[RMDB]
RNA sequence: GGGAACGACUCGAGUAGAGUCGAAAACGCCGCGUCGUCGAUCUCGGCUGCGGCUACGGCUGGUUCUGCCGCUGGGCGGCGGAGCAGGGCGCGGCGCGCGUGCUCGGUAUCGACGUGUCGGCACGCAGAUUACGCUAAAUUUCGAUUUAGCGUAAUCAAAAGAAACAACAACAACAAC
Reactivity to 2A3 in 0.01 (KOAc 150mM, MgCl2 10mM, bicine 150mM(pH8.5), 24C), signal-to-noise 9, nucleotides 027 to 126: c050g000c000c000g000c010g040u160c000g010u010c010g030a070u010c020u010c030g050g000c020u020g010c010g030g000c000u010a010c010g070g020c010u050g070g010u110u020c030u050g000c000c020g000c080u160g090g280g050c010g010g000c000g010g000a010g000c010a030g000g030g050c020g000c010g030g000c110g000c000g000c010g190u090g000c070u130c170g000g010u030a020u040c040g010a060c040g010u020g030u070c000g000g000c010a010c030g020c010a020
Reactivity to DMS in 0.01 (KOAc 150mM, MgCl2 10mM, bicine 150mM(pH8.5), 24C), signal-to-noise 6, nucleotides 027 to 126: c120g010c010c010g010c020g020u010c010g010u000c020g010a040u000c020u000c030g010g010c010u000g010c010g010g000c020u000a010c020g010g010c000u010g010g020u000u000c030u000g010c000c000g020c010u010g030g020g020c010g010g010c000g010g000a010g010c020a080g010g000g000c000g020c010g010g010c010g010c020g010c000g000u000g010c010u010c020g020g000u000a050u000c030g010a050c060g010u000g000u020c010g010g000c010a050c090g020c130a100
Source: RMDB library OK2TST, as collected in RNAgym.
The record gives the reactivity of an RNA of 177 nucleotides to 2A3 and DMS.
In probing experiments dimethyl sulfate is read out at A N1 and C N3, which are open when not base-paired.
The reactions ran in a buffer of 150 mM KOAc, 10 mM MgCl2 and 150 mM bicine (pH 8.5), at 24 C.
The 2A3 profile rests on 64,480 reads.